Structure probing data (2A3) for a 207-nucleotide construct. The RNA was probed in 150 mM KOAc, 10 mM MgCl2 and 150 mM bicine (pH 8.5) at 24 C. It was measured as part of the RMDB library OK3TST.
RNA sequence: GGGAACGACUCGAGUAGAGUCGAAAAACAAAAAAGGAUUGGGGGCAUUUUGUCUAAAAUUAAAUGUAAAUGGUGAUCUGACAUACAGGUGGAAAGAGAAUUGGGAAGUUUUGUUCUCUCUUCUACCAACUUGCCACAUAAUCUUGGCCAAGCAAAGCCCACUAUCAAGUUUCGACUUGAUAGUGGGAAAAGAAACAACAACAACAAC
Reactivity to 2A3 in 0.01 (KOAc 150mM, MgCl2 10mM, bicine 150mM(pH8.5), 24C), signal-to-noise 2, nucleotides 027 to 156: a020c040a000a100a030a010a050a010g080g010a020u070u080g020g020g000g030g000c020a000u000u030u040u140g010u000c020u070a000a000a030a140u080u140a020a040a070u090g030u100a060a070a110u020g040g010u030g040a050u040c020u010g040a010c020a040u160a070c030a030g000g000u000g020g000a000a000a000g000a000g010a020a010u100u040g110g050g040a050a030g030u020u050u240u270g050u040u010c010u000c000u000c080u060u040c020u060a000c000c000a000a000c000u010u020g000c000c020a030c020a080u130a130a030u090c040u050u040g010g000c060c030a030a000g130c050a020a060a010g150